[RMDB]
RNA sequence: GGGAACGACUCGAGUAGAGUCGAAAACACCGCCCGCCGACGCCUUCACCAGCACCGGCAGCUGCGCGGUGGUGACGGCGUCGGGGUCGAGUUCCUCGAGCACCGGCACCCCGGCGGCGGCCAUCAGCCUGACUAUUAGAUUCGUCUAAUAGUCAGGAAAAGAAACAACAACAACAAC
Reactivity to DMS in 0.01 (KOAc 150mM, MgCl2 10mM, bicine 150mM(pH8.5), 24C), signal-to-noise 9, nucleotides 027 to 126: c130a170c070c020g010c040c010c030g020c020c010g010a020c020g020c010c000u000u000c030a020c020c060a130g020c170a120c040c020g000g020c020a210g010c120u010g010c020g010c020g020g010u010g010g010u000g000a010c040g000g000c020g020u000c000g010g000g010g010u000c040g010a110g010u000u010c030c020u000c060g000a070g010c040a110c030c020g000g010c090a140c090c060c030c050g010g010c010g010g010c020g010g000c040c050a060u000c110a100g000
Reactivity to 2A3 in 0.01 (KOAc 150mM, MgCl2 10mM, bicine 150mM(pH8.5), 24C), signal-to-noise 2, nucleotides 027 to 126: c050a020c000c010g010c010c020c020g090c020c000g020a020c010g010c000c010u020u020c020a020c030c020a040g100c080a040c040c000g100g020c040a060g120c150u300g010c300g000c010g040g060u040g010g010u020g010a010c020g000g040c000g010u000c010g010g000g000g000u020c020g010a050g060u110u070c020c010u030c060g040a050g010c030a030c080c000g050g010c050a170c010c040c010c000g050g000c020g010g010c000g020g000c030c020a130u140c040a000g060

Chemical mapping of a 177-nucleotide RNA with DMS and 2A3. Conditions: 150 mM KOAc, 10 mM MgCl2 and 150 mM bicine (pH 8.5), 24 C. Values cover nucleotides 27 to 126. For DMS, 19,329 sequencing reads were counted.